Source: RMDB libraries RFM100 and RFMREP, as collected in RNAgym. Structure probing data (DMS and 2A3) for a 177-nucleotide construct. Reactivities are given for positions 27 through 126. The RNA was probed in 150 mM KOAc, 10 mM MgCl2 and 150 mM bicine (pH 8.5) at 24 C.
[RMDB]
RNA sequence: GGGAACGACUCGAGUAGAGUCGAAAACUAUGGCUUAAACGGCUGCCCCAAAGCUGCCAAAGGUUACGGCAAGUCCACAGAAUUGCAAGUUCGUUUUGCAAGCGGCGGAUGCGCAUUGCACAAAGGAGCAGCAUUAUAAUUUCGAUUAUAAUGCUGCAAAAGAAACAACAACAACAAC
Reactivity to DMS in 0.01 (KOAc 150mM, MgCl2 10mM, bicine 150mM(pH8.5), 24C), signal-to-noise 9, nucleotides 027 to 126: c050u010a070u020g010g020c050u000u020a090a110a160c170g010g010c010u010g000c040c010c010c050a060a120a080g010c030u000g000c010c040a050a150a100g010g000u010u000a080c120g000g010c010a060a240g010u010c020c010a050c050a110g000a100a130u010u000g010c020a020a050g010u030u020c200g010u020u030u000u000g000c020a020a020g010c080g000g020c050g000g000a050u010g010c300g000c030a060u000u000g000c060a060c110a050a090a100g010g010a200
Reactivity to 2A3 in 0.01 (KOAc 150mM, MgCl2 10mM, bicine 150mM(pH8.5), 24C), signal-to-noise 9, nucleotides 027 to 126: c040u050a130u170g030g000c020u070u220a060a070a050c060g030g000c020u040g030c010c000c000c000a060a120a020g020c020u020g010c010c000a050a100a030g100g010u080u080a040c040g020g000c020a030a030g030u020c010c010a070c020a060g110a140a150u050u050g010c010a040a040g030u080u130c070g050u080u110u030u070g010c020a050a030g000c020g070g000c030g020g030a060u090g020c020g000c020a040u050u160g010c050a040c040a070a120a040g080g020a060